Structure probing data (2A3 and DMS) for a 177-nucleotide construct. In probing experiments dimethyl sulfate is read out at A N1 and C N3, which are open when not base-paired. The 2A3 profile rests on 19,630 reads. It was measured as part of the RMDB library RFMREP. 2A3 adducts were read by reverse transcription with SuperScript II with manganese. The RNA was probed in 150 mM KOAc, 10 mM MgCl2 and 150 mM bicine (pH 8.5) at 24 C.
RNA sequence: GGGAACGACUCGAGUAGAGUCGAAAAAGCCCUGGUUCGCCAGGGCUACUAACGUGGGACACCCUUCCCCAACGAAGGGCGCUUAUCUGAAAGGGUAGCUACAUUUUCCACGUUCUUCGGAACGUGGGCAUAUCACGAAAUUCGUUUCGUGAUAUGCAAAAGAAACAACAACAACAAC
Reactivity to 2A3 in 0.01 (KOAc 150mM, MgCl2 10mM, bicine 150mM(pH8.5), 24C), signal-to-noise 8, nucleotides 027 to 126: a000g010c000c000c000u010g000g040u040u050c160g040c060c000a000g010g000g020c000u000a000c000u010a010a010c030g170u250g000g000g020a020c010a030c050c010c000u010u000c030c010c020c070a060a040c090g030a020a020g010g040g020c020g000c030u150u100a040u050c020u030g040a040a020a020g030g010g000u020a020g020c050u150a070c030a260u090u120u090u060c000c000a000c000g000u000u000c000u030u040c090g090g000a000a000c000g000u000g000g000
Reactivity to DMS in 0.01 (KOAc 150mM, MgCl2 10mM, bicine 150mM(pH8.5), 24C), signal-to-noise 6, nucleotides 027 to 126: a120g010c000c000c000u000g000g020u000u010c230g030c000c000a020g010g000g020c000u000a010c020u000a060a080c220g020u010g000g000g000a150c110a070c000c000c000u000u000c010c030c010c150a100a090c240g010a030a010g000g010g030c070g010c080u020u000a020u000c030u000g000a090a200a150g000g000g010u000a020g000c180u010a100c140a100u010u000u010u000c000c000a020c010g010u000u000c000u000u010c210g020g010a010a000c010g030u000g000g010